[RMDB]
RNA sequence: GGGAACGACUCGAGUAGAGUCGAAAAGGGUUCGGGGUACUAGUGUGAAUGCCCGGCUAGUACCCUGUGCUAGUGGUUUAUCUACUGAUGUUCAAUUAAGGGCAUUUGAAACUGCUGUUCGCAGCAGGAAAUACCAAACCUUCGGGUUUGGUAUUUCAAAAGAAACAACAACAACAAC
Reactivity to 2A3 in 0.01 (KOAc 150mM, MgCl2 10mM, bicine 150mM(pH8.5), 24C), signal-to-noise 1, nucleotides 027 to 126: g110g000g030u110u170c020g000g000g000g030u010a000c000u010a000g020u010g050u050g230a060a000u000g000c000c000c000g000g000c010u000a000g010u000a020c000c000c000u010g050u020g020c020u060a020g030u030g080g050u050u260u180a190u130c040u050a010c000u050g130a130u110g120u130u300c100a200a070u170u230a230a300g030g000g000c000a040u010u000u020g010a010a010a010c000u000g010c000u000g060u060u070c160g000c060a030g000c000a010g000
Reactivity to DMS in 0.01 (KOAc 150mM, MgCl2 10mM, bicine 150mM(pH8.5), 24C), signal-to-noise 1, nucleotides 027 to 126: g000g000g010u000u020c070g000g000g010g050u000a000c000u000a000g020u000g010u000g020a040a040u000g030c000c010c020g010g000c000u010a000g000u000a000c010c000c020u000g020u000g010c080u010a020g060u000g010g000u000u010u000a110u010c010u010a070c020u000g010a090u020g020u000u050c170a120a120u000u020a100a100g020g020g000c010a010u000u000u000g000a070a110a270c010u000g000c000u000g010u000u000c120g000c010a000g050c000a000g000

An RNA of 177 nucleotides, treated with 2A3 and DMS and read out base by base.
DMS adducts were read by reverse transcription with MarathonRT.
Conditions: 150 mM KOAc, 10 mM MgCl2 and 150 mM bicine (pH 8.5), 24 C.
Source: RMDB library RFMREP, as collected in RNAgym.
Values cover nucleotides 27 to 126.